[RMDB]
RNA sequence: GGGAACGACUCGAGUAGAGUCGAAAACGCAGAGGGUUCUGAUAACAAAGAACCUAGAUAGCCGCAUCGGUAUUAUAGGAUGUAGUCGGGGAGCCGGAAUGCCUGCAUCGUAAGCCUAUAAGUAAAUUUAAGUGUAAUCACUUCGGUGAUUACACAACAGUCUAACAUGCUUCGGCAUGUUAGACUGAAAAGAAACAACAACAACAAC
Reactivity to 2A3 in 0.01 (KOAc 150mM, MgCl2 10mM, bicine 150mM(pH8.5), 24C), signal-to-noise 2, nucleotides 027 to 156: c060g110c040a040g140a100g090g000g000u000u010c010u010g050a170u080a200a040c030a080a100a050g000a000a010c010c010u030a020g040a110u080a010g050c030c050g030c090a130u140c020g050g000u050a060u300u020a050u120a060g040g030a060u050g000u090a000g040u090c050g000g000g000g020a010g010c010c030g030g020a070a000u060g020c000c000u000g010c000a000u010c020g010u020a000a040g030c000c030u030a070u080a160a090g080u190a030a050a170u120u180u140a210a060g000u000g000u010a000a000u000c000a010c010u050u040c070g070g000u000g000a010u000u000a000c000a000c000a000a000